[RMDB]
RNA sequence: GGGAACGACUCGAGUAGAGUCGAAAAAGGCUGGAGGGUUUGGGCAAGGCAACAUCCCCAUUCCAAUUCCAUUUUCUGAUGCAGAUUUUAGCUGAGGGAUUUGGAAGCCAUUUGGGGAGGCAGGCUGUAUUAAAAUUCGAUUCGUCGAAUUUUAAUAAAAAGAAACAACAACAACAAC
Reactivity to DMS in 0.01 (KOAc 150mM, MgCl2 10mM, bicine 150mM(pH8.5), 24C), signal-to-noise 8, nucleotides 027 to 126: a080g000g010c070u000g010g010a100g010g000g000u000u010u000g020g000g020c090a070a080g010g000c090a080a070c080a120u000c010c000c000c010a050u000u000c110c080a130a250u000u000c000c000a010u000u000u000u000c010u000g000a210u000g010c000a170g000a220u000u000u010u020a140g020c010u000g010a300g000g000g000a000u000u000u000g000g010a020a020g000c180c150a090u000u000u000g010g010g010g000a020g010g010c120a040g000g000c080u000g000
Reactivity to 2A3 in 0.01 (KOAc 150mM, MgCl2 10mM, bicine 150mM(pH8.5), 24C), signal-to-noise 3, nucleotides 027 to 126: a000g050g030c050u080g050g050a100g010g030g040u100u230u080g060g010g000c030a040a020g050g000c000a040a010c020a130u020c000c000c020c000a040u090u000c040c030a060a100u020u000c010c000a010u020u010u010u000c010u020g020a020u010g000c030a060g140a300u200u240u110u300a050g000c000u010g020a030g000g000g000a010u010u010u000g010g000a000a020g010c020c000a030u030u030u000g000g000g010g010a000g010g030c010a000g020g030c010u060g030
Structure probing data (DMS and 2A3) for a 177-nucleotide construct. The data come from the RNA Mapping Database (RMDB), library OK2TRN. The reactions ran in a buffer of 150 mM KOAc, 10 mM MgCl2 and 150 mM bicine (pH 8.5), at 24 C.